[RMDB]
RNA sequence: GGGAACGACUCGAGUAGAGUCGAAAAGGGAAAAUGACAACGGUUCAUUAAACCUCACGAUCAGAUGCUGACAGCCCCUCACAGGUUGCUGCAGACAAAACAGGGAACGACAGGAAAAAGAUGACCGCUAGAUCUCAUCGUUCGCGAUGAGAUCUAGAAAAGAAACAACAACAACAAC
Reactivity to 2A3 in 0.01 (KOAc 150mM, MgCl2 10mM, bicine 150mM(pH8.5), 24C), signal-to-noise 1, nucleotides 027 to 126: g120g040g040a060a050a000a160u090g020a000c010a160a070c140g030g000u110u010c060a000u040u080a180a210a130c040c000u010c010a020c040g020a030u040c030a040g090a160u130g050c010u010g040a250c010a010g010c050c000c000c020u020c040a180c010a040g060g060u130u150g000c000u040g000c000a030g100a090c020a000a110a010a020c050a030g010g020g010a020a020c010g040a020c030a000g000g090a200a130a020a000a020g020a100u100g000a040c000c070g000
Reactivity to DMS in 0.01 (KOAc 150mM, MgCl2 10mM, bicine 150mM(pH8.5), 24C), signal-to-noise 1, nucleotides 027 to 126: g010g000g000a110a230a050a010u040g000a070c110a300a150c080g000g040u000u000c000a000u020u020a030a290a290c020c000u030c150a060c100g050a130u010c040a140g040a050u000g000c010u000g000a120c040a020g000c050c080c000c030u010c180a010c220a070g000g000u000u020g000c040u020g010c030a000g000a050c060a050a040a070a060c080a110g010g000g000a060a110c040g010a070c060a030g020g000a030a020a100a060a240g030a030u000g020a040c110c030g000
Conditions: 150 mM KOAc, 10 mM MgCl2 and 150 mM bicine (pH 8.5), 24 C. The record gives the reactivity of an RNA of 177 nucleotides to 2A3 and DMS. For DMS, 584 sequencing reads were counted. The data come from the RNA Mapping Database (RMDB), library OK2TRN. For DMS the reverse transcriptase was MarathonRT.